Source information: This 177-nucleotide RNA was probed chemically with 2A3. Source: RMDB library RFM100, as collected in RNAgym. For 2A3, 412 sequencing reads were counted. 2A3 adducts were read by reverse transcription with SuperScript II with manganese. The reactions ran in a buffer of 150 mM KOAc, 10 mM MgCl2 and 150 mM bicine (pH 8.5), at 24 C.

RNA sequence: GGGAACGACUCGAGUAGAGUCGAAAAAGCACUGAUAUGAUACGUCAUAUCAGUGCAACUGGAUGUGCUCGUUAGUCAUAGACGAUACACAGAGAACGGUCAUAUGACUAGAGACACAUUCAGCUAAUAACAGCGUUCCGUUCGCGGAACGCUGUUAAAAAGAAACAACAACAACAAC
Reactivity to 2A3 in 0.01 (KOAc 150mM, MgCl2 10mM, bicine 150mM(pH8.5), 24C), signal-to-noise 1, nucleotides 027 to 126: a000g060c000a010c000u030g000a000u030a000u050g010a010u050a000c140g190u000c000a040u000a000u000c000a000g000u000g000c160a000a000c000u010g000g000a000u010g000u000g000c020u000c030g190u110u170a000g000u000c000a000u000a040g000a000c020g010a130u070a200c200a030c100a060g160a000g240a300a010c140g060g010u000c030a140u000a000u040g000a000c000u000a000g000a000g110a090c000a000c000a000u000u000c000a000g000c000u010a140a170